[RMDB]
RNA sequence: GGGAACGACUCGAGUAGAGUCGAAAACGGGCGUAGUUGUGGAGACACAAUGAGCGCGGUGAACGCUGCGCCUAGGUGUUAUCCCUAGGGUGUUAGGCAGUGGUUCUCUGACAGCCGGAAGGGAUGACCGCGUGUCGAGCUUCGGCUUGAUGCGCGGAAAAGAAACAACAACAACAAC
Reactivity to DMS in 0.01 (KOAc 150mM, MgCl2 10mM, bicine 150mM(pH8.5), 24C), signal-to-noise 9, nucleotides 027 to 126: c050g010g010g010c080g010u010a120g010u000u020g010u000g000g010a170g000a200c020a010c010a030a030u010g010a140g010c040g000c010g000g000u000g000a090a080c110g010c000u000g000c000g000c000c000u000a030g000g010u020g010u020u020a080u020c180c000c000u000a110g000g000g010u010g010u020u020a100g010g000c060a080g010u010g010g010u010u010c020u010c010u000g010a080c100a080g010c010c010g000g010a120a080g000g010g000a060u010g000a190
Reactivity to 2A3 in 0.01 (KOAc 150mM, MgCl2 10mM, bicine 150mM(pH8.5), 24C), signal-to-noise 9, nucleotides 027 to 126: c020g010g040g000c030g030u060a030g010u040u020g000u010g010g050a060g020a020c000a000c010a020a070u090g030a080g090c060g000c010g030g000u070g060a050a010c060g000c010u010g000c020g110c000c000u020a030g000g070u080g080u230u190a110u130c010c000c000u010a020g020g020g020u080g090u130u110a070g080g000c050a030g010u080g130g060u140u030c050u000c010u020g030a030c020a040g090c020c000g040g040a080a060g040g010g010a040u060g040a040